Background
This 207-nucleotide RNA was probed chemically with 2A3 and DMS. The reactions ran in a buffer of 150 mM KOAc, 10 mM MgCl2 and 150 mM bicine (pH 8.5), at 24 C. The DMS profile rests on 2,557 reads.
[RMDB]
RNA sequence: GGGAACGACUCGAGUAGAGUCGAAAAUUUACCUCUCUGAGACAGUCCACCACAUCCACCUGAUGGAAUUGUUAACAAGAUCAAUAAGAUUAUCUGUAUAAAGCUCUAGCAUUGUACCUGGAACAAGUUAGUGUCAAAUCUCAAUAAAUGAGAGUAGACAACGUUAAACGUUCGCGUUUAACGUUGUAAAAGAAACAACAACAACAAC
Reactivity to 2A3 in 0.01 (KOAc 150mM, MgCl2 10mM, bicine 150mM(pH8.5), 24C), signal-to-noise 3, nucleotides 027 to 156: u080u040u120a070c000c000u010c000u000c030u090g040a060g010a070c010a030g020u010c000c010a030c020c000a030c050a070u050c020c020a070c030c040u100g040a090u040g000g010a050a080u120u040g050u060u030a030a070c060a080a050g020a090u060c050a060a080u110a140a040g030a060u140u080a030u150c020u100g080u090a110u090a130a090a000g000c000u000c000u040a030g000c030a070u010u050g040u020a050c020c020u030g000g040a070a030c000a030a030g020u050u050a030g010u010g010u040c030a160a050a080u000c030u000c010a090a200u190a200a100a060u110g010a020g000a020g000u020a030g000
Reactivity to DMS in 0.01 (KOAc 150mM, MgCl2 10mM, bicine 150mM(pH8.5), 24C), signal-to-noise 2, nucleotides 027 to 156: u030u010u010a120c060c030u010c050u000c030u010g020a300g000a040c030a110g010u010c000c020a040c000c030a080c010a120u010c100c090a080c110c040u000g010a050u000g020g010a020a080u000u000g020u000u000a050a120c100a020a090g010a100u010c030a100a140u000a130a140g000a300u010u000a060u010c030u010g010u020a110u010a060a080a160g020c050u010c010u010a040g050c000a140u000u010g020u000a030c040c020u000g070g020a060a060c050a060a100g010u000u010a080g010u010g040u000c030a080a040a130u010c010u010c030a040a170u000a070a160a180u000g010a040g000a030g010u000a100g000
Source information: Source: RMDB library OK3TST, as collected in RNAgym.